[RMDB]
RNA sequence: GGGAACGACUCGAGUAGAGUCGAAAAAAGUGAUCCUGCGCCGACAAUGUAGCGGGGCUCAAGUACACCGCCGAAGCCGCGGCAUUCACAUAACACCCAUGCGGGUCUACGGGCCUGUGUGCAGUGGAGAGGAGUCUUUAUUCGUAAAGACUCCUCUAAAAGAAACAACAACAACAAC
Reactivity to DMS in 0.01 (KOAc 150mM, MgCl2 10mM, bicine 150mM(pH8.5), 24C), signal-to-noise 4, nucleotides 027 to 126: a090a040g010u020g000a030u010c240c010u010g000c030g010c100c010g020a100c070a160a100u010g010u030a100g000c020g000g010g000g020c120u010c130a120a090g030u020a110c090a110c030c020g000c030c060g000a090a100g000c230c010g000c020g000g000c100a060u020u010c030a020c040a060u010a100a080c070a020c010c300c000a020u000g020c010g000g000g020u000c000u000a120c230g050g000g000c000c000u000g020u000g000u000g000c230a100g000u020g000g000
Reactivity to 2A3 in 0.01 (KOAc 150mM, MgCl2 10mM, bicine 150mM(pH8.5), 24C), signal-to-noise 5, nucleotides 027 to 126: a010a000g100u050g020a050u040c000c000u010g020c020g000c010c010g130a160c080a140a130u190g040u090a130g030c030g000g000g030g000c040u060c120a070a080g040u060a040c070a040c030c010g000c000c000g100a070a010g040c070c020g000c000g030g030c010a050u080u110c030a030c010a060u190a130a040c020a010c000c020c000a010u020g010c020g000g000g000u000c010u030a120c160g050g020g000c000c000u010g000u000g010u010g010c050a040g030u050g040g030
Structure probing data (DMS and 2A3) for a 177-nucleotide construct. Conditions: 150 mM KOAc, 10 mM MgCl2 and 150 mM bicine (pH 8.5), 24 C. For 2A3 the reverse transcriptase was SuperScript II with manganese. In probing experiments dimethyl sulfate is read out at A N1 and C N3, which are open when not base-paired.